The data come from the RNA Mapping Database (RMDB), library RNAMAK. Chemical mapping of a 207-nucleotide RNA with 2A3.
RNA sequence: GGGAACGACUCGAGUAGAGUCGAAAAUGCUAUUCGUAGCAAGAGUCGGGGUCUCCGUUGAUCAUGCUACUCCAUCGAUCUACACUGAAGCCUCCACGGUGUAGGGAGGAGGUCAUGGGAGGAGACGGAGGCACCCAAUUACAAUGUUCGCAUUGAAAUAAUGGCGACAUUUCGAUGUCGCCAUUAUAAAAGAAACAACAACAACAAC
Reactivity to 2A3 in 0.01 (KOAc 150mM, MgCl2 10mM, bicine 150mM(pH8.5), 24C), signal-to-noise 2, nucleotides 027 to 156: u080g020c040u030a030u030u180c270g160u030a020g020c030a060a080g050a020g190u120c060g080g050g130g020u010c000u010c010c000g040u080u020g000a000u010c000a000u000g040c020u110a300c000u010c000c000a120u300c000g010a000u000c000u010a000c010a010c000u010g050a140a030g010c000c000u000c000c010a000c000g010g010u000g000u000a000g000g000g000a020g000g010a000g000g020u040c000a010u010g000g000g000a010g050g000a000g020a000c070g010g000a000g010g000c000a030c000c030c000a010a040u160u140a090c040a030a020u060g060u080u090c190g050c270a080u060u110g050a010a230
For 2A3, 1,259 sequencing reads were counted.
The RNA was probed in 150 mM KOAc, 10 mM MgCl2 and 150 mM bicine (pH 8.5) at 24 C.